[RMDB]
RNA sequence: GGGAACGACUCGAGUAGAGUCGAAAACUCACGGGCCGAAUGAACUAGCCCUGAAAAUGGAUGGCGCUCAAGCGUGCUACCCAUACCUCGCCGUCGGGGUAGAAACGAAGCCCCGACGAGUAGGCAGCAUAUAUUUGACGUUCGCGUCAAAUAUAUGAAAAGAAACAACAACAACAAC
Reactivity to DMS in 0.01 (KOAc 150mM, MgCl2 10mM, bicine 150mM(pH8.5), 24C), signal-to-noise 5, nucleotides 027 to 126: c060u020c030a210c190g000g000g010c000c070g000a100a120u000g000a100a130c170u010a150g010c010c000c000u000g010a050a040a120a020u000g010g000a030u010g000g000c010g010c010u000c140a080a150g000c240g020u000g000c000u000a040c000c000c010a060u000a120c030c010u000c070g040c040c010g000u000c000g010g000g000g030u000a060g000a070a080a150c300g010a160a240g010c000c000c010c000g000a000c000g000a020g010u000a020g000g010c300a090g010
Reactivity to 2A3 in 0.01 (KOAc 150mM, MgCl2 10mM, bicine 150mM(pH8.5), 24C), signal-to-noise 6, nucleotides 027 to 126: c010u020c010a040c050g000g000g000c030c010g160a160a260u170g050a190a070c060u030a090g000c010c020c000u020g090a090a110a010a010u030g010g010a000u020g030g000c020g020c030u110c190a080a090g070c040g030u030g080c010u020a050c010c000c000a020u070a090c000c000u040c080g040c050c000g000u000c000g010g000g000g000u030a050g140a090a220a020c110g050a100a010g020c000c000c000c000g000a000c000g000a010g000u040a010g000g000c020a010g060